[RMDB]
RNA sequence: GGGAACGACUCGAGUAGAGUCGAAAAGUUAUGCUCUCGCUGCCUAAUGGCGGUGCGGGAAACCCACUCUAAAGUCCUUAGGGUUAGCCCCUUAAGGCGGGGUUCGGACGCACCUGGCAACAGAAGCUGAAACUGUGCACAUUCGUGUGCACAGUAACAAAUUCCAAAUAUUCGUAUUUGGAAUUUGAAAAGAAACAACAACAACAAC
Reactivity to 2A3 in 0.01 (KOAc 150mM, MgCl2 10mM, bicine 150mM(pH8.5), 24C), signal-to-noise 7, nucleotides 027 to 156: g060u090u100a100u220g020c010u000c000u010c060g010c020u010g000c000c010u260a290a170u190g160g050c090g000g020u010g000c010g000g010g040a060a020a020c020c030c010a090c040u170c100u200a220a140a130g200u150c000c000u000u000a010g010g010g030u040u050a030g040c020c000c000c010u020u050a000a000g000g000c000g000g000g000g000u020u060c040g070g040a030c010g000c000a010c000c010u010g090g000c000a010a010c010a040g030a040a010g000c020u040g020a100a060a000c000u000g000u000g000c000a000c000a010u020u110c200g060u050g000u000g000c000a000c000a000g000u020a000a000
Reactivity to DMS in 0.01 (KOAc 150mM, MgCl2 10mM, bicine 150mM(pH8.5), 24C), signal-to-noise 4, nucleotides 027 to 156: g020u010u010a070u000g000c000u000c010u000c060g020c010u000g010c000c010u000a140a140u000g040g050c120g040g050u010g020c010g020g010g000a040a040a070c010c010c020a180c140u000c110u000a060a100a120g000u000c040c020u000u010a040g010g010g030u000u000a180g010c220c300c010c000u000u000a020a020g030g040c020g010g030g030g010u000u000c030g030g020a260c000g010c010a010c010c000u010g010g020c020a040a070c030a050g010a050a070g030c010u000g010a110a070a040c010u000g020u000g010c030a020c010a100u000u010c270g020u000g000u000g010c010a000c010a010g010u000a010a130